[RMDB]
RNA sequence: GGGAACGACUCGAGUAGAGUCGAAAACACUGAUGGGAGGAGGAUUGAGGUUCUUUCUACCAAGGAGCCAGGAGGAUGGCUGUCACUGCUCCUGGAAGCAGGGACUCCCAGAUGUGGGGAUAAGUACGCAGGGCCUGCCUUCCCUCCACUCUUGGUGUCCCAUUCUGAUUUUCGAAUCAGAAUGGGAAAAAGAAACAACAACAACAAC
Reactivity to 2A3 in 0.01 (KOAc 150mM, MgCl2 10mM, bicine 150mM(pH8.5), 24C), signal-to-noise 3, nucleotides 027 to 156: c100a010c040u060g010a040u070g010g000g040a010g020g000a000g010g020a040u030u070g040a060g060g000u040u010c040u030u040u020c030u040a040c010c010a050a040g210g020a020g120c160c100a130g050g000a000g010g000a020u000g000g020c030u010g000u000c040a050c290u010g000c000u020c030c030u060g020g040a040a020g100c030a020g000g000g020a030c000u050c010c010c020a050g080a290u280g080u150g030g000g000g000a030u060a140a050g040u080a060c070g000c010a010g000g020g000c000c080u030g000c010c000u040u060c030c000c010u000c010c000a030c000u010c000u000u010g010g000u020g030